[RMDB]
RNA sequence: GGGAACGACUCGAGUAGAGUCGAAAAAAUUUAGAUUAUCCAGGUGUAGCGGUGAAAUUCGUAGAGAUCAGGUGGAUAAUGAACCGGUGGCGAAGGCGAAAGAUAACCGCUGAAAUGCUGAAGUGAAGAAAGCGAUAUUAUUCGUAAUAUCGCUUUCAAAAGAAACAACAACAACAAC
Reactivity to DMS in 0.01 (KOAc 150mM, MgCl2 10mM, bicine 150mM(pH8.5), 24C), signal-to-noise 3, nucleotides 027 to 126: a070a030u010u010u000a090g010a120u020u010a070u000c040c010a070g010g010u000g030u000a050g010c030g030g000u000g020a060a130a080u000u010c040g030u010a070g000a160g000a080u000c060a070g000g000u010g000g000a150u010a080a080u010g000a100a020c020c010g010g020u000g010g020c100g010a070a120g000g000c040g000a010a050a050g000a050u000a110a050c020c010g060c000u000g010a050a050a120u000g010c040u010g010a080a120g010u010g010a090a140
The record gives the reactivity of an RNA of 177 nucleotides to DMS. DMS adducts were read by reverse transcription with MarathonRT. The reactions ran in a buffer of 150 mM KOAc, 10 mM MgCl2 and 150 mM bicine (pH 8.5), at 24 C. The data come from the RNA Mapping Database (RMDB), library M2PK90.